Chemical mapping of a 207-nucleotide RNA with DMS and 2A3. It was measured as part of the RMDB library M2RFPK. For 2A3 the reverse transcriptase was SuperScript II with manganese. The 2A3 profile rests on 3,591 reads. Conditions: 150 mM KOAc, 10 mM MgCl2 and 150 mM bicine (pH 8.5), 24 C. DMS adducts were read by reverse transcription with MarathonRT.
[RMDB]
RNA sequence: GGGAACGACUCGAGUAGAGUCGAAAAACCAAGUCUGGGGGCCGAUGAGGGUUGGCUCAAUGUAGGGUUUUGACUUGAAAACUCAAGCUGUGACCCCAAAACGAUGGAGGUAAAUGAGAAUCCUCCUAAAACUAUGGACACUUCGGUGUCCAUAGAAGAUAUUCAUGAUGUUCGCAUCAUGAAUAUCAAAAGAAACAACAACAACAAC
Reactivity to DMS in 0.01 (KOAc 150mM, MgCl2 10mM, bicine 150mM(pH8.5), 24C), signal-to-noise 2, nucleotides 027 to 156: a170c080c040a080a130g010u010c030u000g010g010g020g050g050c000c000g030a070u010g020a140g020g000g030u010u000g000g000c050u010c060a040a060u010g010u000a090g010g030g000u010u000u000u010g020a050c040u000u030g010a040a110a040a170c150u010c030a000a090g030c010u000g040u000g000a130c010c000c000c050a010a060a060a130c100g010a130u000g010g000a020g040g030u020a010a080a110u000g000a150g000a210a190u000c000c000u000c000c030u010a010a050a080a170c000u010a000u010g020g000a030c000a020c010u000u000c300g030g010u000g020u000c000c000a000u000a000g000a080a100
Reactivity to 2A3 in 0.01 (KOAc 150mM, MgCl2 10mM, bicine 150mM(pH8.5), 24C), signal-to-noise 5, nucleotides 027 to 156: a000c020c000a040a010g070u020c060u110g050g000g000g000g030c060c060g030a040u090g050a070g040g100g030u030u050g020g000c010u020c060a060a130u180g050u120a100g030g010g000u040u050u090u050g050a080c010u010u050g040a040a070a090a100c080u030c030a040a000g010c030u050g040u120g120a100c000c010c010c010a060a080a020a020c070g040a040u090g000g010a000g030g000u080a100a180a160u200g000a050g050a070a060u040c010c010u000c000c010u030a050a020a000a000c000u000a000u000g000g000a000c000a000c020u030u060c200g090g010u000g000u000c000c000a000u000a000g000a010a000